The record gives the reactivity of an RNA of 177 nucleotides to 2A3 and DMS. The data come from the RNA Mapping Database (RMDB), library OK2TRN. Reactivities are given for positions 27 through 126. The DMS profile rests on 17,722 reads.

RNA sequence: GGGAACGACUCGAGUAGAGUCGAAAAAGGUGCUCGAUGAGGUCAAUGGCGUGAUUGCCAGCGCCCGCGAGCGUAUUGCGGCAUUCUCCCCUGAACUGGUGGUGCUGUUUGCGCCAGAUCACUACAAGCUUAAUUACUGUUUCGACAGUAAUUAAGCAAAAGAAACAACAACAACAAC
Reactivity to 2A3 in 0.01 (KOAc 150mM, MgCl2 10mM, bicine 150mM(pH8.5), 24C), signal-to-noise 7, nucleotides 027 to 126: a000g110g010u070g000c010u010c030g160a300u080g050a110g130g030u220c100a070a050u030g000g000c020g030u090g090a130u080u240g010c000c010a010g010c030g010c020c000c000g020c000g010a010g010c010g000u000a050u030u180g050c030g020g000c020a030u110u010c020u010c030c000c000c020u040g020a080a040c020u030g010g020u030g020g050u060g060c030u030g120u110u120u120g020c020g000c010c000a010g010a040u070c030a020c060u160a060c030a100a030
Reactivity to DMS in 0.01 (KOAc 150mM, MgCl2 10mM, bicine 150mM(pH8.5), 24C), signal-to-noise 9, nucleotides 027 to 126: a060g010g020u000g010c010u000c010g010a070u010g010a120g020g000u010c040a070a300u000g000g010c000g020u000g010a140u020u020g000c010c010a040g000c300g000c010c000c010g000c030g000a020g010c010g010u000a010u000u000g010c070g010g000c070a140u010u000c050u000c020c010c020c090u000g000a070a100c070u000g010g010u010g010g020u000g010c050u000g010u000u000u000g010c040g000c060c010a030g000a070u000c030a050c150u010a100c170a080a130